Structure probing data (DMS and 2A3) for a 177-nucleotide construct. Reactivities are rounded to 0.1 and cut off at 0 and 3. It was measured as part of the RMDB library OK2TRN. For 2A3 the reverse transcriptase was SuperScript II with manganese. DMS adducts were read by reverse transcription with MarathonRT. Values cover nucleotides 27 to 126.
[RMDB]
RNA sequence: GGGAACGACUCGAGUAGAGUCGAAAACGCCAAGGACGCCAUCAUCGAGGCCAUCGACGCCGAAAUUCCGCUGUUGGUUGUGAUCACCGAGGGAAUUCCGGUGCAGGACACCGCCUAUGCCUGGGCCUAAGUCUCCAAGAUUCGUCUUGGAGACUUAAAAAGAAACAACAACAACAAC
Reactivity to DMS in 0.01 (KOAc 150mM, MgCl2 10mM, bicine 150mM(pH8.5), 24C), signal-to-noise 3, nucleotides 027 to 126: c120g000c020c020a100a110g010g010a080c070g010c040c020a050u000c080a050u000c060g000a130g000g000c020c040a090u000c080g020a210c050g000c000c020g000a020a010a040u010u000c000c010g030c080u010g010u010u000g020g010u020u000g030u020g020a090u000c100a040c010c030g010a090g010g000g010a020a040u000u000c030c000g000g020u000g010c050a150g000g000a100c070a100c060c070g000c070c040u000a100u000g000c020c010u000g000g000g010c040c090
Reactivity to 2A3 in 0.01 (KOAc 150mM, MgCl2 10mM, bicine 150mM(pH8.5), 24C), signal-to-noise 2, nucleotides 027 to 126: c040g000c050c010a020a040g050g000a020c060g040c060c000a040u040c020a000u020c080g050a050g010g030c000c000a050u100c080g100a070c020g000c020c000g040a020a010a000u030u000c020c010g140c190u050g090u180u110g050g000u060u080g090u060g090a070u200c050a010c000c010g030a080g000g040g000a020a000u020u020c020c010g010g000u010g040c020a010g030g090a030c030a030c070c000g080c000c010u070a060u070g000c010c020u050g000g050g000c000c000